[RMDB]
An RNA of 177 nucleotides, treated with DMS and read out base by base. High DMS reactivity at an A or C suggests that its Watson-Crick edge is free. Conditions: 150 mM KOAc, 10 mM MgCl2 and 150 mM bicine (pH 8.5), 24 C.
RNA sequence: GGGAACGACUCGAGUAGAGUCGAAAAGAUAUGGAACACUCAAGCAAGGGAGCUGACUAGAUUCAACAAUCGGAAACGAUUGCGCAUUUCUAGUACAGCAUCGAUCUUGCUUGAGUGUUCCUAAGUCCUUACAAGCUCAGUUCGCUGAGCUUGUAAGAAAAGAAACAACAACAACAAC
Reactivity to DMS in 0.01 (KOAc 150mM, MgCl2 10mM, bicine 150mM(pH8.5), 24C), signal-to-noise 3, nucleotides 027 to 126: g000a110u010a290u000g000g000a060a030c030a030c010u000c010a030a020g020c000a000a010g000g000g020a010g080c000u000g000a080c020u000a000g000a020u000u010c210a180a070c010a000a010u000c010g010g000a130a140a220c040g030a020u000u000g020c050g010c190a300u000u000u000c000u000a000g000u000a160c000a000g000c010a270u000c240g000a030u010c000u000u000g000c000u000u000g000a000g030u000g010u000u010c010c000u000a020a080g010u010c030